[RMDB]
RNA sequence: GGGAACGACUCGAGUAGAGUCGAAAACAUUAAGGCGACGGCGAUGAGGAUCAUGGCAAUUCCACGCAACGGCAGUUGUUUCACAAGGUCCAAGUCUAGCGUGUGUCCCUGCGUCGGCGGAGUCGUGUCCAUGACAUCAUUUCGAUGAUGUCAUGGAAAAAGAAACAACAACAACAAC
Reactivity to DMS in 0.01 (KOAc 150mM, MgCl2 10mM, bicine 150mM(pH8.5), 24C), signal-to-noise 4, nucleotides 027 to 126: c050a140u000u040a080a080g010g020c040g010a080c060g000g010c040g000a070u010g000a250g000g010a060u010c080a160u020g000g030c120a060a080u000u010c120c010a060c150g000c120a060a100c180g000g000c110a080g010u000u000g000u000u010u010c050a110c160a070a070g000g010u000c010c030a080a180g000u000c040u010a220g020c010g020u000g010u010g000u010c010c000c010u000g000c050g020u000c050g020g010c050g000g000a060g010u000c000g020u000g000
Reactivity to 2A3 in 0.01 (KOAc 150mM, MgCl2 10mM, bicine 150mM(pH8.5), 24C), signal-to-noise 2, nucleotides 027 to 126: c030a030u110u110a120a060g040g000c000g030a030c010g080g110c010g050a060u020g020a030g030g000a020u050c050a090u190g010g000c000a030a080u130u070c060c000a030c030g100c050a040a010c060g020g030c040a050g050u040u010g010u050u140u070c070a090c000a140a050g040g000u030c000c000a040a010g030u000c050u050a010g000c010g000u030g030u040g010u040c040c010c020u100g060c000g030u000c000g080g100c040g000g010a010g010u000c020g020u030g050